[RMDB]
RNA sequence: GGGAACGACUCGAGUAGAGUCGAAAAGAACUCACCUUCGGGUGAGUUCAAACCCGAUGAAGCGGCACUUAGACAGCUUCAUACACCUAAGAAGUGCAAUUAAAACAACGCGGUUCGCCGCGUUGAACUUUCGAUAAAUCUUCGGAUUUAUCGAAAGAAAAGAAACAACAACAACAAC
Reactivity to 2A3 in 0.01 (KOAc 150mM, MgCl2 10mM, bicine 150mM(pH8.5), 24C), signal-to-noise 2, nucleotides 027 to 126: g000a010a000c000u000c000a000c010c000u020u070c150g040g000g000u000g000a000g000u000u000c000a000a000a000c040c010c000g000a040u030g010a000a000g000c060g050g010c080a000c080u090u020a040g050a150c050a030g010c010u000u010c000a000u050a010c100a040c000c060u090a100a050g050a050a010g070u010g060c040a040a070u210u160a070a050a040a060c000a000a000c010g000c030g000g050u040u040c170g010c090c000g000c010g000u000u000g000a000a000
Reactivity to DMS in 0.01 (KOAc 150mM, MgCl2 10mM, bicine 150mM(pH8.5), 24C), signal-to-noise 2, nucleotides 027 to 126: g000a010a010c000u000c000a000c000c000u010u030c110g030g020g030u000g000a000g010u000u000c010a030a070a090c000c010c020g010a090u000g000a000a020g000c000g030g080c050a040c150u010u010a050g000a080c110a150g010c010u010u000c010a040u000a230c120a000c090c020u000a140a080g020a050a130g030u000g020c150a200a090u020u000a030a040a100a220c030a000a000c000g000c020g000g030u030u010c190g010c030c000g000c000g010u000u000g030a050a090